Conditions: 150 mM KOAc, 10 mM MgCl2 and 150 mM bicine (pH 8.5), 24 C. Structure probing data (2A3) for a 207-nucleotide construct. 2A3 is a SHAPE reagent: it acylates the 2'-hydroxyl of flexible nucleotides of all four kinds. The data come from the RNA Mapping Database (RMDB), library OK3TST.
[RMDB]
RNA sequence: GGGAACGACUCGAGUAGAGUCGAAAAACAAUGGUGCUACCUCCUGCUCUCCUCUCUUUUCUAAUCUGUCUCCAUCAGUGGUGCCACUGUGUACUUUCAGCCCAAGUCUAGGAAACAGCACACCCAGUGCUCCCCAUUCAGGACCAGGACUCAUUGCGCGUGAAAUACCAUUCGUGGUAUUUCACGCAAAAGAAACAACAACAACAAC
Reactivity to 2A3 in 0.01 (KOAc 150mM, MgCl2 10mM, bicine 150mM(pH8.5), 24C), signal-to-noise 1, nucleotides 027 to 156: a000c130a060a140u100g030g050u040g000c000u040a030c020c000u050c000c030u010g010c000u020c000u020c050c000u070c000u040c000u140u050u090u010c080u020a110a130u020c010u080g090u020c000u060c050c030a050u030c060a040g050u010g130g020u090g060c020c000a030c030u050g000u030g000u090a020c070u020u090u070c010a050g000c030c000c000a040a010g010u000c050u050a050g000g100a100a080a160c020a000g020c050a010c010a000c000c010c010a010g000u000g030c000u010c000c000c020c000a050u040u030c010a010g000g010a010c020c020a010g010g010a020c020u000c050a060u120u070g050c040